[RMDB]
RNA sequence: GGGAACGACUCGAGUAGAGUCGAAAAACUGGUUAAUGGGGACAGUGUGAGGAGGUUGAAGCCCUGCUAGGAUGCAGACCGAAGAUGCCUGGGAUAGACCGAUGCUGUCUAACUCUCCUUACUGCCCAACCUGUACUCAGUUCGCUGAGUACAGGUUAAAAGAAACAACAACAACAAC
Reactivity to 2A3 in 0.01 (KOAc 150mM, MgCl2 10mM, bicine 150mM(pH8.5), 24C), signal-to-noise 2, nucleotides 027 to 126: a000c020u060g000g050u140u120a130a060u260g070g020g000g090a020c010a040g020u010g040u070g140a090g030g040a050g020g010u060u050g080a120a050g010c000c020c000u000g030c010u030a040g040g050a060u160g110c020a030g060a130c000c050g000a050a010g040a040u070g040c050c110u070g000g010g000a040u030a020g030a000c000c050g040a040u150g000c070u050g030u000c010u000a010a020c010u020c010u000c050c000u000u020a020c010u030g020c000c000c000
Reactivity to DMS in 0.01 (KOAc 150mM, MgCl2 10mM, bicine 150mM(pH8.5), 24C), signal-to-noise 4, nucleotides 027 to 126: a170c060u000g020g010u010u010a070a070u000g020g000g000g010a080c030a030g010u000g000u030g020a060g010g000a100g010g010u010u010g000a170a170g010c030c070c010u010g010c040u010a110g020g000a130u000g000c130a080g010a110c030c030g000a090a030g010a090u000g000c050c050u000g010g010g000a110u000a100g000a030c030c050g000a130u020g010c090u010g020u010c010u000a050a060c060u010c010u000c010c020u000u000a030c060u010g000c000c010c020
Notes:
This 177-nucleotide RNA was probed chemically with 2A3 and DMS. DMS adducts were read by reverse transcription with MarathonRT.